[RMDB]
An RNA of 207 nucleotides, treated with 2A3 and DMS and read out base by base. As a SHAPE reagent, 2A3 marks flexible, mostly unpaired nucleotides at the ribose 2'-OH. It was measured as part of the RMDB library RNAMAK. 2A3 adducts were read by reverse transcription with SuperScript II with manganese. For DMS, 3,564 sequencing reads were counted.

RNA sequence: GGGAACGACUCGAGUAGAGUCGAAAACCGUAGGUUUGGAAGAAUGCAUCGAUCGUGUACGGCGUAUGGUUCGAAAGAGCCAUACCGCUCGUGGUACACGGGAGCAUUCCCAAACCUAAACGGAAAACAGGGUACCAAGUUCGCUUGGUACCCUGAAGACUAAACAUUCGUUCGCGAAUGUUUAGUCAAAAGAAACAACAACAACAAC
Reactivity to 2A3 in 0.01 (KOAc 150mM, MgCl2 10mM, bicine 150mM(pH8.5), 24C), signal-to-noise 3, nucleotides 027 to 156: c000c000g020u000a010g010g020u000u010u020g050g010a240a190g010a110a010u010g010c070a300u080c080g130a110u080c010g030u010g000u010a010c030g000g000c000g000u000a000u000g010g010u000u000c010g060a100a060a030g000a010g000c000c000a000u010a010c010c030g000c010u040c020g170u150g130g000u010a000c010a000c000g000g000g000a010g000c000a000u000u000c000c000c010a010a000a020c000c000u000a020a020a010c000g020g030a020a070a020a110c000a000g010g000g000u000a000c000c000a000a000g020u020u100c220g040c150u000u000g000g000u000a000c000c010c010u000g000a000a000
Reactivity to DMS in 0.01 (KOAc 150mM, MgCl2 10mM, bicine 150mM(pH8.5), 24C), signal-to-noise 1, nucleotides 027 to 156: c000c010g080u000a010g000g000u000u000u000g000g020a120a120g020a040a020u000g000c020a290u000c170g000a100u000c000g020u000g000u000a020c020g030g010c000g000u000a000u000g000g060u000u000c000g010a080a140a280g000a050g010c000c000a010u020a000c050c090g040c030u010c140g020u020g040g000u000a010c000a000c010g000g020g000a130g000c020a060u000u010c000c040c000a000a010a000c000c020u000a010a010a100c050g010g000a090a070a110a170c000a000g000g030g030u000a020c000c000a020a070g020u000u000c300g010c010u000u010g020g000u000a000c000c000c010u020g000a050a070